[RMDB]
RNA sequence: GGGAACGACUCGAGUAGAGUCGAAAAAAUUGUGCGUGGAGAGCAUGAAGGAAAAAUUUAUGAUGCACGGGUGAAAGUGACUAGAAGCGUGGCAUCAACAAUGAGGCAAUUCUCAUCAACUCCUCUCCGUGCAAUGGAGUUUCGACUCCAUUGCACGAAAAGAAACAACAACAACAAC
Reactivity to DMS in 0.01 (KOAc 150mM, MgCl2 10mM, bicine 150mM(pH8.5), 24C), signal-to-noise 2, nucleotides 027 to 126: a070a150u000u020g000u010g000c070g010u030g050g000a020g030a070g000c170a020u010g030a080a120g000g000a020a100a000a070a130u000u000u040a180u040g000a020u060g010c000a030c040g090g000g000u000g000a050a070a060g000u040g020a120c100u070a120g030a030a040g000c010g010u010g000g040c000a000u000c030a010a110c140a000a060u010g010a050g000g000c270a150a160u000u000c000u000c090a090u050c120a150a030c050u000c120c100u000c040u010c010
Reactivity to 2A3 in 0.01 (KOAc 150mM, MgCl2 10mM, bicine 150mM(pH8.5), 24C), signal-to-noise 2, nucleotides 027 to 126: a000a000u300u090g070u060g090c160g000u100g010g000a020g020a010g010c060a150u070g080a150a120g160g000a020a020a020a020a010u190u130u120a220u140g050a000u020g000c000a000c040g010g000g040u060g090a300a080a050g010u070g050a030c030u040a150g010a180a000g040c020g030u130g080g040c020a000u050c000a000a130c170a050a020u070g020a000g040g010c040a000a060u130u220c000u000c000a060u040c000a040a080c000u000c000c100u050c000u000c010